[RMDB]
RNA sequence: GGGAACGACUCGAGUAGAGUCGAAAAUCGAUGGCGUUCGCGCCAUCGAAGAGCCGUACCGCGUAGCACGCGGAUAGGAGUGAAGAUAUCCAAGCCCAUGGAGGAGGCGUGCUUUCGAGCACGCCAAACUCUGAAUUAUAUUCGUAUAAUUCAGAGUAAAAGAAACAACAACAACAAC
Reactivity to 2A3 in 0.01 (KOAc 150mM, MgCl2 10mM, bicine 150mM(pH8.5), 24C), signal-to-noise 3, nucleotides 027 to 126: u020c000g000a000u010g000g010c030g030u060u050c230g010c020g020c080c000a000u020c000g000a000a010g020a020g040c020c020g060u150a080c010c010g000c010g030u030a040g160c200a040c090g000c020g000g000a030u200a050g020g030a020g030u110g140a100a060g030a180u140a050u110c010c000a010a020g030c000c010c000a030u050g000g020a030g000g060a050g010g000c010g000u010g000c000u110u080u090c240g060a000g000c000a000c020g000c010c000a000a000
Reactivity to DMS in 0.01 (KOAc 150mM, MgCl2 10mM, bicine 150mM(pH8.5), 24C), signal-to-noise 5, nucleotides 027 to 126: u000c000g000a010u010g010g020c000g020u000u010c240g020c020g020c000c000a010u000c000g000a010a050g000a120g000c010c010g000u020a300c010c010g000c000g000u000a140g010c130a300c020g020c010g010g000a080u000a060g010g000a130g010u000g000a080a050g000a120u010a080u000c000c020a020a070g020c000c000c010a160u000g000g000a060g000g010a180g010g000c000g000u000g000c010u000u000u020c120g010a020g010c020a000c000g000c010c010a020a050

This 177-nucleotide RNA was probed chemically with 2A3 and DMS. Conditions: 150 mM KOAc, 10 mM MgCl2 and 150 mM bicine (pH 8.5), 24 C. For DMS, 5,897 sequencing reads were counted. Source: RMDB library M2PK50, as collected in RNAgym. Reactivities are rounded to 0.1 and cut off at 0 and 3. Values cover nucleotides 27 to 126. The 2A3 profile rests on 5,826 reads.